[RMDB]
RNA sequence: GGGAACGACUCGAGUAGAGUCGAAAAGAUAUGGACCCACGUAACAUCCACACAGCUUGGAUUUAAAACCUGGGUCGGAAACGACCCAGGUUUUUGUCAGCUGAAUGUGGUGGUGGGUCCUAAGUCACGAUAGCAUGAAGUUCGCUUCAUGCUAUCGAAAAGAAACAACAACAACAAC
Reactivity to DMS in 0.01 (KOAc 150mM, MgCl2 10mM, bicine 150mM(pH8.5), 24C), signal-to-noise 1, nucleotides 027 to 126: g000a080u010a300u010g000g000a010c020c000c000a000c000g040u020a040a020c160a090u020c000c000a020c030a050c000a000g000c000u010u000g010g000a010u000u010u010a000a000a000a000c000c000u000g040g040g000u000c000g050g000a110a090a290c010g050a010c000c000c000a030g000g000u020u000u000u000u000g000u000c010a030g000c000u000g000a090a110u020g020u000g010g060u010g020g010u000g010g000g000u020c010c000u000a000a060g020u010c060a300

Source: RMDB library TTRINS, as collected in RNAgym.
Chemical mapping of a 177-nucleotide RNA with DMS.
Reactivities are rounded to 0.1 and cut off at 0 and 3.
The DMS profile rests on 1,292 reads.
The RNA was probed in 150 mM KOAc, 10 mM MgCl2 and 150 mM bicine (pH 8.5) at 24 C.